Annotation
Source: RMDB libraries RFM100 and RFMREP, as collected in RNAgym. This 177-nucleotide RNA was probed chemically with DMS and 2A3. The 2A3 profile rests on 17,255 reads. Reactivities are given for positions 27 through 126.
RNA sequence: GGGAACGACUCGAGUAGAGUCGAAAAAACGAGCAAUACAGGAGUGGUGCAUGGUCGUUGGAAAUUGAUGGGAUGACUUUGACCUUAAAUGGUUGAAUGAGUGAGAUCUUUUGGACAUGUUCCGCACAUCUAACUAGGGUUUCGACCCUAGUUAGAUAAAAGAAACAACAACAACAAC
Reactivity to DMS in 0.01 (KOAc 150mM, MgCl2 10mM, bicine 150mM(pH8.5), 24C), signal-to-noise 8, nucleotides 027 to 126: a060a060c100g010a080g010c070a060a050u040a080c120a090g010g000a080g040u000g010g020u000g000c060a060u010g010g020u010c050g000u010u020g010g010a050a060a060u010u010g010a060u010g000g010g010a040u000g010a240c160u000u000u000g000a040c020c010u000u010a070a080a090u020g010g010u000u000g000a030a020u000g000a190g010u010g010a110g000a050u000c010u010u000u000u010g000g000a060c080a100u000g000u010u000c020c020g030c150a110c170
Reactivity to 2A3 in 0.01 (KOAc 150mM, MgCl2 10mM, bicine 150mM(pH8.5), 24C), signal-to-noise 9, nucleotides 027 to 126: a000a000c100g010a050g050c070a110a060u140a180c030a060g050g040a060g060u040g010g010u020g030c020a040u030g070g020u050c030g070u060u090g060g050a040a090a090u100u080g020a040u050g040g090g050a020u030g010a020c010u020u020u030g010a010c000c000u060u040a090a150a140u210g010g010u010u020g040a030a040u060g000a020g060u070g020a080g010a060u010c000u010u060u050u080g040g010a010c020a040u070g020u060u010c010c000g020c020a040c000